Structure probing data (2A3) for a 207-nucleotide construct. The RNA was probed in 150 mM KOAc, 10 mM MgCl2 and 150 mM bicine (pH 8.5) at 24 C. Source: RMDB library M2RFPK, as collected in RNAgym. For 2A3, 2,368 sequencing reads were counted.

[RMDB]
RNA sequence: GGGAACGACUCGAGUAGAGUCGAAAAACAGUCAGUACGCUGACUGAGGGAAACGGGAGCCGGGCUAGGGACAAGAGCCAUCCCAAGUCCAAGGCCAAGUAGGCUCUAGUGAUGGUACGCCAUCACAAAAACUGGUCUACCUUCGGGUAGACCAGAACGAAUAUUGUGCGUUCGCGCACAAUAUUCGAAAAGAAACAACAACAACAAC
Reactivity to 2A3 in 0.01 (KOAc 150mM, MgCl2 10mM, bicine 150mM(pH8.5), 24C), signal-to-noise 3, nucleotides 027 to 156: a010c010a000g020u010c010a000g010u050a050c240g050c080u000g020a000c000u000g020a120g030g060g020a050a120a100c130g040g000g060a040g050c030c010g010g000g000c010u030a050g020g030g000a000c030a110a060g000a000g020c000c010a030u020c000c000c000a010a000g010u000c000c040a110a080g030g000c060c040a100a040g050u080a110g080g010c000u000c010u020a050g000u010g020a000u000g000g000u050a050c280g020c000c000a000u000c000a000c000a010a060a000a010a020c000u000g010g000u000c000u000a000c000c010u030u060c160g070g000g000u000a000g010a000c000c000a000g000a000a010